Notes
The record gives the reactivity of an RNA of 177 nucleotides to DMS and 2A3. Conditions: 150 mM KOAc, 10 mM MgCl2 and 150 mM bicine (pH 8.5), 24 C. Values cover nucleotides 27 to 126.
RNA sequence: GGGAACGACUCGAGUAGAGUCGAAAACUAUGUACAGACAGUACAGUGGAUAAGGUCUGUUGAUAUCCAACUUGAACAAUGGUACUUGCAGUGGUAUCUAUCAAGAUAGGCAGGCUAUCAUAGAAAGAAGAUGUGUAUUAUUCGUAAUACGCAUCUUAAAAGAAACAACAACAACAAC
Reactivity to DMS in 0.01 (KOAc 150mM, MgCl2 10mM, bicine 150mM(pH8.5), 24C), signal-to-noise 9, nucleotides 027 to 126: c020u010a050u010g020u010a010c020a120g020a130c240a140g010u000a010c020a060g010u020g000g010a110u010a070a090g000g010u010c040u000g000u010u000g000a120u020a050u010c060c130a070a140c020u000u000g000a040a080c190a060a040u020g000g010u000a020c010u000u010g010c150a110g010u030g020g010u000a010u000c000u000a090u020c090a040a010g000a070u010a080g010g010c020a010g000g000c090u000a030u000c030a060u010a060g000a080a060a080g000
Reactivity to 2A3 in 0.01 (KOAc 150mM, MgCl2 10mM, bicine 150mM(pH8.5), 24C), signal-to-noise 6, nucleotides 027 to 126: c010u010a030u040g000u000a010c020a070g180a040c010a030g040u010a000c000a000g020u020g050g010a060u010a100a040g020g010u000c000u000g000u000u020g040a020u010a050u060c020c030a020a030c010u010u010g000a070a020c040a090a070u140g000g000u000a000c000u020u120g150c080a070g030u030g070g010u010a000u000c000u000a070u020c010a010a000g000a030u020a010g020g000c000a000g000g000c000u010a010u030c010a030u030a030g090a030a110a010g120